RNA sequence: GGGAACGACUCGAGUAGAGUCGAAAACGGACCGAAUACAUCCGUCGGCGUUUAGCCCAGGAUGCGCAGACGGCUCGCGUCACCGUGACAGCCGCGGAUCUUCGACGCCUCAGGGGUGCGGUUGCCGCCACAGGGCAGCCUUCGGGCUGCCCUGUGGAAAAGAAACAACAACAACAAC
Reactivity to 2A3 in 0.01 (KOAc 150mM, MgCl2 10mM, bicine 150mM(pH8.5), 24C), signal-to-noise 1, nucleotides 027 to 126: c010g010g010a030c000c000g020a080a160u210a060c010a140u000c040c020g040u040c100g040g000c040g050u110u060u140a040g000c000c070c060a110g000g040a010u080g130c000g000c010a030g050a050c000g020g000c040u050c010g020c000g110u280c120a090c170c040g040u010g020a170c060a010g020c030c040g000c010g040g000a040u110c040u100u020c020g130a050c010g000c000c040u090c130a000g030g050g010g010u060g000c000g000g040u070u020g050c090c000g040

The data come from the RNA Mapping Database (RMDB), library OK1LIB. Chemical mapping of a 177-nucleotide RNA with 2A3. Values cover nucleotides 27 to 126. Conditions: 150 mM KOAc, 10 mM MgCl2 and 150 mM bicine (pH 8.5), 24 C. 2A3 adducts were read by reverse transcription with SuperScript II with manganese.